[RMDB]
RNA sequence: GGGAACGACUCGAGUAGAGUCGAAAAGGUGCCCUAUCCGAAGCACUGCAGUUUCGGUAGAAAGGCUAAGCACCUCGCAAUGAGGUAAGGUGGGACUUUUCCUUCUGGAACCAAGCGGUUGGUUCCGCCCAAUACUAUACUUCGGUAUAGUAUUGGGAAAAGAAACAACAACAACAAC
Reactivity to 2A3 in 0.01 (KOAc 150mM, MgCl2 10mM, bicine 150mM(pH8.5), 24C), signal-to-noise 9, nucleotides 027 to 126: g060g010u060g040c010c000c010u010a040u040c010c000g010a000a010g030c050a060c300u300g060c110a090g010u010u000u020c000g010g000u000a010g040a030a040a000g030g000c020u030a030a040g060c030a020c020c000u000c010g040c090a200a300u300g010a030g030g040u040a020a030g070g020u130g010g000g020a040c020u050u060u030u080c010c000u080u100c120u140g000g010a010a000c000c000a020a020g140c110g250g170u030u030g000g000u010u000c000c000g000
Reactivity to DMS in 0.01 (KOAc 150mM, MgCl2 10mM, bicine 150mM(pH8.5), 24C), signal-to-noise 8, nucleotides 027 to 126: g010g010u000g000c000c020c010u000a090u000c000c000g000a020a020g010c010a110c210u010g010c240a130g010u000u000u000c000g000g000u000a040g010a090a110a090g010g010c060u000a070a130g000c090a060c010c000u000c020g000c180a140a090u000g000a030g000g010u010a050a060g010g010u000g010g010g010a100c080u000u000u000u000c030c030u000u000c140u010g020g010a020a010c000c000a010a050g020c230g000g000u000u000g000g010u000u000c000c000g010